Overview
An RNA of 177 nucleotides, treated with DMS and read out base by base. Reactivities are rounded to 0.1 and cut off at 0 and 3. The RNA was probed in 150 mM KOAc, 10 mM MgCl2 and 150 mM bicine (pH 8.5) at 24 C. The DMS profile rests on 853 reads.
RNA sequence: GGGAACGACUCGAGUAGAGUCGAAAAAACCCACUCAUUGGGGUCCGCUGUUCCAUUCUUUCUUACCUUGUGGCCGGCAUGGUCCCAGCCUCCUCGCUGGCGCCGGCUGGGCAACAUUCCGAGGGGACAAUACCACCAACUUCGGUUGGUGGUAUUGAAAAGAAACAACAACAACAAC
Reactivity to DMS in 0.01 (KOAc 150mM, MgCl2 10mM, bicine 150mM(pH8.5), 24C), signal-to-noise 1, nucleotides 027 to 126: a060a120c030c000c000a140c220u010c080a150u000u010g010g010g030g000u000c020c090g020c020u000g000u020u000c020c020a110u010u010c040u010u000u000c040u000u010a120c080c050u000u000g060u000g010g000c040c000g000g030c000a160u030g030g000u000c260c010c010a040g000c000c020u000c040c060u000c050g010c020u010g010g010c220g020c010c020g020g000c000u020g050g010g000c080a050a050c100a060u010u010c110c040g010a030g010g000g000g020a220